Chemical mapping of a 177-nucleotide RNA with 2A3 and DMS.
2A3 adducts were read by reverse transcription with SuperScript II with manganese.

[RMDB]
RNA sequence: GGGAACGACUCGAGUAGAGUCGAAAACAAAUUCGCCAACAAGAUCCAACAACGGCGCAAGCGCACUUACUUGAUCGACGCGUAUCUUAAUAAAGCGCAAGUUGCGUUGGCGAUGCGAUAACCAGCGCAUAUUCCUAAGAUUCGUCUUAGGAAUAUGAAAAGAAACAACAACAACAAC
Reactivity to 2A3 in 0.01 (KOAc 150mM, MgCl2 10mM, bicine 150mM(pH8.5), 24C), signal-to-noise 9, nucleotides 027 to 126: c010a000a220a030u040u010c010g000c010c000a000a000c010a020a070g130a180u110c090c020a030a030c000a030a040c100g060g000c020g010c040a090a030g010c010g030c030a040c060u110u220a050c020u140u270g090a100u220c090g090a080c060g020c000g030u060a090u080c070u110u210a160a090u110a170a170a020g000c000g000c030a070a050g010u010u030g050c050g010u000u000g000g000c000g000a010u010g000c010g010a010u050a070a050c020c010a020g050c060g000
Reactivity to DMS in 0.01 (KOAc 150mM, MgCl2 10mM, bicine 150mM(pH8.5), 24C), signal-to-noise 9, nucleotides 027 to 126: c080a050a130a140u000u000c010g020c000c010a020a020c030a190a160g010a100u010c190c130a100a150c040a030a050c080g000g010c010g010c020a080a110g010c030g010c040a140c130u010u010a090c180u000u000g010a060u010c070g020a130c090g010c030g010u000a060u010c170u010u010a060a090u010a050a100a090g000c000g010c020a040a100g020u000u000g010c070g010u000u000g010g010c010g000a010u000g010c200g000a070u000a090a140c030c030a090g010c150g000